[RMDB]
Chemical mapping of a 177-nucleotide RNA with 2A3 and DMS. It was measured as part of the RMDB library OK2TST. For DMS the reverse transcriptase was MarathonRT. The reactions ran in a buffer of 150 mM KOAc, 10 mM MgCl2 and 150 mM bicine (pH 8.5), at 24 C.
RNA sequence: GGGAACGACUCGAGUAGAGUCGAAAAAAUGGUUUCAUGAAUCCCUAAGGGGAUAGCCAGGUGCUUGCAUGCUAAGAAGGAAAAUGGCUAUGCUUGUAUAACCUUACGAAUUCGAUAAUGCUGGGCCUCUAGGUUUGAACUUCGGUUCAAACCUAGAAAAAGAAACAACAACAACAAC
Reactivity to 2A3 in 0.01 (KOAc 150mM, MgCl2 10mM, bicine 150mM(pH8.5), 24C), signal-to-noise 1, nucleotides 027 to 126: a000a010u190g040g020u070u040u060c030a090u060g110a100a030u000c010c030c000u020a120a090g080g020g000g030a000u000a020g000c000c040a030g090g000u040g070c010u020u010g010c030a070u000g000c010u130a130a050g010a080a050g200g060a020a090a080a040u060g010g000c010u070a000u070g070c000u070u000g080u000a120u020a060a070c000c030u000u010a030c040g040a050a070u090u090c000g020a010u090a190a000u170g010c000u030g000g000g020c000c000
Reactivity to DMS in 0.01 (KOAc 150mM, MgCl2 10mM, bicine 150mM(pH8.5), 24C), signal-to-noise 1, nucleotides 027 to 126: a180a020u010g020g030u010u010u000c090a120u000g010a170a060u010c000c020c010u010a110a120g100g030g000g010a030u000a030g000c010c050a070g000g040u010g000c060u000u020g010c020a030u000g000c090u000a050a080g010a060a050g010g010a100a050a070a050u030g000g000c010u020a050u010g050c160u000u010g000u000a030u000a050a030c040c020u000u000a100c150g010a220a120u000u000c000g010a050u000a020a050u000g020c030u000g020g010g000c080c030